Structure probing data (2A3 and DMS) for a 207-nucleotide construct.
Source: RMDB library RNAMAK, as collected in RNAgym.
For DMS the reverse transcriptase was MarathonRT.
[RMDB]
RNA sequence: GGGAACGACUCGAGUAGAGUCGAAAAUGUUGUGGGUUCGCCCACAACAAAAAAGAUAUGGAAUGACAAGCUUUUGACGCUCCGGUGUCGGAAACGACAUGCGGAGCGAUAAGCUUGUAUUCCUAAGUCAAAAAAGGCAUUCCUUCGGGAAUGCCAAUCUAUGAACCAUGUUCGCAUGGUUCAUAGAAAAAGAAACAACAACAACAAC
Reactivity to 2A3 in 0.01 (KOAc 150mM, MgCl2 10mM, bicine 150mM(pH8.5), 24C), signal-to-noise 3, nucleotides 027 to 156: u080g000u000u000g000u010g010g000g020u040u090c190g100c030c000c020a020c020a000a020c020a000a000a010a010a000a010g020a010u030a010u040g000g010a020a010u080g130a160c010a000a000g000c010u130u190u230u170g190a190c180g000c000u010c000c010g020g000u000g000u000c000g000g020a010a030a010c010g010a010c020a020u130g260c030g000g000a000g000c000g000a000u020a000a000g000c000u000u000g010u010a000u000u010c000c000u000a010a010g030u020c030a040a010a000a050a030a030g020g020c000a000u030u040c000c000u030u110c280g090g000g000a000a000u000g000c000c000a000a020
Reactivity to DMS in 0.01 (KOAc 150mM, MgCl2 10mM, bicine 150mM(pH8.5), 24C), signal-to-noise 1, nucleotides 027 to 156: u020g020u000u000g050u030g010g000g040u000u010c300g010c030c000c000a000c000a000a010c000a000a020a080a020a090a100g000a040u000a090u000g000g010a020a030u010g000a060c000a020a010g010c000u000u000u000u000g010a260c140g020c000u000c010c000g020g020u000g020u020c010g050g020a050a050a100c010g000a010c010a010u000g010c030g040g000a000g000c020g000a000u000a010a010g010c010u000u000g000u000a010u010u000c000c010u010a000a080g000u000c020a000a030a070a100a130a150g010g000c000a000u000u000c000c000u000u000c300g010g030g010a010a010u000g010c000c010a010a000